The data come from the RNA Mapping Database (RMDB), library RFMREP. An RNA of 177 nucleotides, treated with 2A3 and DMS and read out base by base. 2A3 is a SHAPE reagent: it acylates the 2'-hydroxyl of flexible nucleotides of all four kinds. Values cover nucleotides 27 to 126.
[RMDB]
RNA sequence: GGGAACGACUCGAGUAGAGUCGAAAAGCCGGCUUGGCACUCGCGAACACCGCGAUUUCACUUAUAACUCGCGGCGUUAGCUCUGUGUCAAACCGGCAAAAGGAAGGUCGCCUUCGGGCGACCUUCCCGUCUUAGUGUAGUUCGCUACACUAAGACGAAAAGAAACAACAACAACAAC
Reactivity to 2A3 in 0.01 (KOAc 150mM, MgCl2 10mM, bicine 150mM(pH8.5), 24C), signal-to-noise 1, nucleotides 027 to 126: g000c020c030g030g020c020u010u030g000g000c020a000c020u030c030g000c000g010a010a010c010a010c000c000g040c010g010a030u010u080u110c110a090c140u250u220a120u060a300a040c000u000c000g000c000g000g000c000g000u000u000a000g000c000u040c080u170g000u010g010u000c000a020a000a000c010c000g000g010c000a000a000a000a000g000g010a010a000g030g000u020c000g010c020c010u010u040c160g100g000g000c000g070a000c000c010u000u000c000c010
Reactivity to DMS in 0.01 (KOAc 150mM, MgCl2 10mM, bicine 150mM(pH8.5), 24C), signal-to-noise 1, nucleotides 027 to 126: g040c000c000g010g000c020u000u000g000g020c020a030c010u000c210g000c010g010a060a070c010a020c000c000g010c000g010a000u000u010u000c220a170c300u000u030a050u020a050a030c250u000c000g010c000g000g020c010g000u000u000a080g000c010u020c070u020g000u010g000u000c010a030a000a010c000c000g030g010c010a000a010a070a060g010g000a020a020g000g030u000c000g020c000c000u020u010c190g050g040g020c000g010a000c010c000u000u000c000c010